[RMDB]
RNA sequence: GGGAACGACUCGAGUAGAGUCGAAAACACAUUCUAUUCGUAGAAUGUGGAACGUUGAGAGAUCGACAGCGUCGCAGCUAUGUCGAACGAGGAAGAGCGCGCAGGGAUCGGGCUUCGGCCCGAUCAAUUCGAGUUAGCGAUUCGUCGCUAACUCGAAAAAAGAAACAACAACAACAAC
Reactivity to DMS in 0.01 (KOAc 150mM, MgCl2 10mM, bicine 150mM(pH8.5), 24C), signal-to-noise 2, nucleotides 027 to 126: c030a000c010a000u000u000c010u000a000u000u020c240g010u000a010g010a030a000u000g000u000g000g010a050a040c100g030u000u000g000a140g010a130g000a070u000c010g010a020c010a050g000c020g010u000c280g020c140a150g010c050u000a090u000g010u000c000g010a040a110c090g000a100g000g000a070a040g000a070g000c050g030c080g050c110a080g000g000g030a010u000c000g010g000g010c000u000u020c210g040g010c000c000c000g010a000u000c010a110a090
Structure probing data (DMS) for a 177-nucleotide construct.
The reactions ran in a buffer of 150 mM KOAc, 10 mM MgCl2 and 150 mM bicine (pH 8.5), at 24 C.
Reactivities are given for positions 27 through 126.